RNA sequence: GGGAACGACUCGAGUAGAGUCGAAAAUCAAGCAACACCCCAAAACCUUACACUGAGAGCAUUUAGCCUGAUUACUCUUUAAAUCAAAUCAGGCAAUAGAGAGAAACUCGAGAGGUGAAAACCCCACAUAACGAUCUAGGCUUCGGCCUAGAUCGAAUCUAUACUAGCUCUUCGGAGCUAGUAUAGAAAAAGAAACAACAACAACAAC
Reactivity to DMS in 0.01 (KOAc 150mM, MgCl2 10mM, bicine 150mM(pH8.5), 24C), signal-to-noise 1, nucleotides 027 to 156: u000c030a110a220g030c070a120a060c000a110c010c000c000c010a050a130a160a090c080c030u000u000a090c060a120c130u000g000a090g000a040g010c010a300u010u000u000a050g000c000c000u000g000a020u000u010a070c040u000c010u000u000u000a080a040a060u000c110a030a050a010u000c000a000g000g040c030a090a120u000a050g000a170g020a230g000a110a200a050c040u000c000g010a120g010a110g000g050u000g000a050a080a090a080c040c000c030c030a020c050a090u000a040a100c010g000a010u000c020u000a020g010g010c030u010u020c200g100g010c000c010u000a010g000a000u000c000g010a000a010
Reactivity to 2A3 in 0.01 (KOAc 150mM, MgCl2 10mM, bicine 150mM(pH8.5), 24C), signal-to-noise 2, nucleotides 027 to 156: u060c000a030a000g110c040a050a180c020a070c040c000c040c030a030a110a050a070c050c040u140u180a100c160a050c140u130g070a020g000a000g040c010a010u030u050u090a010g000c000c000u010g000a010u000u040a020c010u000c030u220u300u050a050a100a050u200c090a000a000a050u000c000a010g000g000c000a010a010u010a010g020a000g020a000g020a020a070a040c020u010c030g060a060g010a040g010g000u020g010a040a000a010a050c010c020c030c000a070c030a080u180a140a020c010g000a010u000c000u000a010g000g000c020u050u020c230g090g000c000c000u000a000g000a000u000c000g000a000a000
Record summary
Chemical mapping of a 207-nucleotide RNA with DMS and 2A3. For 2A3 the reverse transcriptase was SuperScript II with manganese. The reactions ran in a buffer of 150 mM KOAc, 10 mM MgCl2 and 150 mM bicine (pH 8.5), at 24 C. The 2A3 profile rests on 998 reads.